[RMDB]
RNA sequence: GGGAACGACUCGAGUAGAGUCGAAAAAUUACUGGCUUUAUUCCUUUACAAGGUAGAGGAACGAGACGUCGCUCCGAGGAUGUUGUUCCGAAUCCAAAGAUCAAGCGGCGCAGGUUAAAUCGGAAAUAGUCGUUGCAGACUCCGAUGUAGCGGUGAAUCAAUACUAGUUGUUCGCAACUAGUAUUGAAAAAGAAACAACAACAACAAC
Reactivity to DMS in 0.01 (KOAc 150mM, MgCl2 10mM, bicine 150mM(pH8.5), 24C), signal-to-noise 2, nucleotides 027 to 156: a150u010u010a110c050u000g000g030c030u010u010u000a060u020u000c020c000u010u010u010a050c030a200a110g060g000u000a040g020a050g020g000a010a020c020g000a130g000a130c050g020u000c010g030c010u000c020c010g030a300g000g000a050u000g020u000u000g010u000u000c030c000g010a080a060u000c030c020a090a190a140g020a050u000c120a070a070g010c020g030g010c020g050c030a050g020g010u010u000a040a110a050u010c030g010g000a060a080a150u000a140g010u000c020g000u010u010g000c130a160g000a120c040u000c010c000g010a070u000g000u000a050g050c030g000g000u000g010a150a230
Reactivity to 2A3 in 0.01 (KOAc 150mM, MgCl2 10mM, bicine 150mM(pH8.5), 24C), signal-to-noise 3, nucleotides 027 to 156: a010u180u120a040c040u040g080g000c000u090u140u050a050u080u060c010c000u040u010u020a100c140a220a120g170g000u010a010g010a010g020g000a010a050c020g010a030g070a160c010g010u000c000g000c010u010c020c030g000a020g010g010a000u010g010u130u070g030u070u020c010c000g020a010a000u000c000c000a020a030a010g000a020u100c110a150a020g000c020g020g000c080g000c040a030g000g090u110u180a050a120a060u060c000g010g040a010a020a050u100a020g020u000c000g030u020u050g020c030a020g040a230c080u000c050c070g020a060u000g040u030a010g020c010g000g040u020g070a030a060